[RMDB]
RNA sequence: GGGAACGACUCGAGUAGAGUCGAAAAUAGAUGGGAAAUGGAUUCACGCCAACUUAACCGGAUUAACAUUCCGAAAUGUUAAGACCAAAACCAUUAAAUGCACAUGGGUAAACCACUCCAUGCAGAUCAAGAAAACUUUCAAAGCCGAUAAGCGUUACGCGCAUACGAAAUUCGUUUCGUAUGCGCGAAAAGAAACAACAACAACAAC
Reactivity to 2A3 in 0.01 (KOAc 150mM, MgCl2 10mM, bicine 150mM(pH8.5), 24C), signal-to-noise 2, nucleotides 027 to 156: u190a000g060a000u000g000g010g090a030a020a100u040g010g030a040u190u120c030a000c110g070c000c010a030a080c020u060u060a000a000c040c020g000g010a010u050u050a130a020c050a030u060u020c010c010g090a160a100a080u080g000u000u000a000a000g030a050c040c040a000a110a050a000c000c030a030u070u070a250a050a080u120g000c060a040c010a060u020g050g000g130u170a140a120a020c020c000a010c050u000c000c000a000u030g060c010a020g010a070u110c050a060a020g050a080a100a140a080c090u080u180u090c210a160a080a000g030c080c020g080a070u120a070a000g080c060g070u110u110a020
Notes
The record gives the reactivity of an RNA of 207 nucleotides to 2A3. Values cover nucleotides 27 to 156. It was measured as part of the RMDB library OK3TST. The RNA was probed in 150 mM KOAc, 10 mM MgCl2 and 150 mM bicine (pH 8.5) at 24 C.